[RMDB]
RNA sequence: GGGAACGACUCGAGUAGAGUCGAAAAUUCGAUCCGGACCGGCUCAUCUCGGCAAAAGGCGGCAGUCCUCAGUGCUCUUACUCUUUCCUAUAAAGAGGAGACUGCUGGACUCGCCGCCCAAGCCCGACAAUACAACCAUCUUCGGAUGGUUGUAUUGAAAAGAAACAACAACAACAAC
Reactivity to DMS in 0.01 (KOAc 150mM, MgCl2 10mM, bicine 150mM(pH8.5), 24C), signal-to-noise 2, nucleotides 027 to 126: u020u000c030g000a060u000c040c040g010g010a090c130c020g010g000c030u010c040a150u010c040u000c010g020g020c050a050a030a140a100g000g010c000g000g000c000a010g000u000c000c010u000c030a040g020u000g010c070u010c010u000u000a300c030u000c010u000u000u010c260c230u010a100u020a030a010a010g000a010g000g000a040g020a030c000u000g000c190u010g030g000a000c010u000c170g030c000c010g010c000c000c020a010a150g000c010c000c060g000a130
Reactivity to 2A3 in 0.01 (KOAc 150mM, MgCl2 10mM, bicine 150mM(pH8.5), 24C), signal-to-noise 2, nucleotides 027 to 126: u040u020c020g040a050u040c050c050g020g040a010c020c000g020g000c000u020c020a110u040c010u030c040g010g000c010a040a040a000a000g020g000c010g000g000c020a000g010u000c000c000u000c000a000g000u080g170c020u000c000u070u160a250c000u030c000u000u060u050c020c080u220a180u170a250a010a000g000a000g020g010a000g000a000c000u000g050c060u010g000g010a000c000u010c070g010c000c000g000c010c000c000a000a000g000c000c000c000g010a010